[RMDB]
RNA sequence: GGGAACGACUCGAGUAGAGUCGAAAAGGCUAUGACUCGUGUCCGUCGGCGUAGCCGACAACAUGCCCAGGUAGCCCAGACCUUCAAGGCUACGGUGGGUUGCGACGCACGGUCUGAUUCUUCACAAAGUAGUCCCGAGUCUUCGGACUCGGGACAAGCAUGAUAAAGACUUCGGUCUUUAUCAUGCAAAAGAAACAACAACAACAAC
Reactivity to DMS in 0.01 (KOAc 150mM, MgCl2 10mM, bicine 150mM(pH8.5), 24C), signal-to-noise 1, nucleotides 027 to 156: g010g060c020u000a070u010g020a050c000u000c040g000u010g000u000c070c120g030u000c000g140g000c000g000u020a060g000c000c010g020a070c030a050a050c050a080u010g000c000c000c010a080g040g000u010a050g010c000c000c070a140g030a190c140c140u000u010c090a190a080g020g020c000u010a000c020g000g040u000g020g040g040u010u000g020c020g000a110c050g020c030a060c140g000g020u030c000u000g000a180u010u000c010u020u010c000a120c100a100a110a210g020u000a250g010u000c000c000c000g040a090g000u000c000u010u000c300g070g010a010c000u000c030g020g000g010a000c000a000a030
Reactivity to 2A3 in 0.01 (KOAc 150mM, MgCl2 10mM, bicine 150mM(pH8.5), 24C), signal-to-noise 2, nucleotides 027 to 156: g040g040c060u050a070u180g020a060c030u010c190g020u010g000u000c060c030g020u000c010g070g000c240g110u160a020g050c000c000g050a000c010a050a020c080a050u190g010c020c000c000a000g030g030u000a000g000c060c030c050a060g050a190c060c080u140u110c090a090a060g000g000c000u000a000c000g050g300u050g000g000g000u000u100g010c090g030a030c050g010c020a000c020g020g000u000c000u000g050a060u070u010c010u050u090c090a040c050a270a120a040g080u190a070g000u040c010c000c000g000a000g010u000c000u070u180c200g050g000a000c000u020c000g000g000g000a000c000a000a000